The record gives the reactivity of an RNA of 207 nucleotides to DMS and 2A3. The DMS profile rests on 2,476 reads.
[RMDB]
RNA sequence: GGGAACGACUCGAGUAGAGUCGAAAAGGGGUCAGGGACGAUUCCAGUGGGAGACAUGCUGUACUGAAGCCUCCACGGUACAGCAACAGCUCCCAUAGGAACACGACUCCCUGACGGAGGCACCCACUGCUUGCUUUUAGUUCGCUAAAAGCAAGAAGACCACUGUAAGUUUCGACUUACAGUGGUCAAAAGAAACAACAACAACAAC
Reactivity to DMS in 0.01 (KOAc 150mM, MgCl2 10mM, bicine 150mM(pH8.5), 24C), signal-to-noise 1, nucleotides 027 to 156: g000g040g050g040u000c000a060g030g000g030a190c000g010a120u000u000c000c000a300g100u000g010g000g010a050g000a060c040a300u010g010c000u010g010u000a010c010u010g010a030a120g040c000c000u010c000c000a300c010g000g000u000a020c030a010g000c010a010a040c160a160g000c000u020c000c020c020a010u000a050g010g020a010a040c120a250c160g000a140c100u010c000c000c000u010g010a040c070g040g000a040g100g030c020a180c010c000c030a150c130u020g020c040u000u010g010c010u020u000u010u000a010g010u000u030c300g050c010u010a000a000a000a000g020c000a010a000g000a060a100
Reactivity to 2A3 in 0.01 (KOAc 150mM, MgCl2 10mM, bicine 150mM(pH8.5), 24C), signal-to-noise 3, nucleotides 027 to 156: g060g010g030g000u000c020a000g000g000g010a010c020g040a070u040u040c010c010a020g030u000g010g030g010a020g020a090c070a130u100g010c010u000g000u000a000c010u030g030a100a020g000c000c010u000c000c000a010c000g000g000u000a000c010a010g050c010a040a050c060a030g090c030u000c000c000c010a000u010a030g000g000a050a040c170a020c270g020a020c010u020c010c000c010u000g010a000c010g000g000a000g010g000c010a030c010c010c000a050c070u130g020c010u010u000g000c000u000u010u000u000a010g010u030u060c250g050c130u000a000a010a000a000g000c010a000a000g000a000a010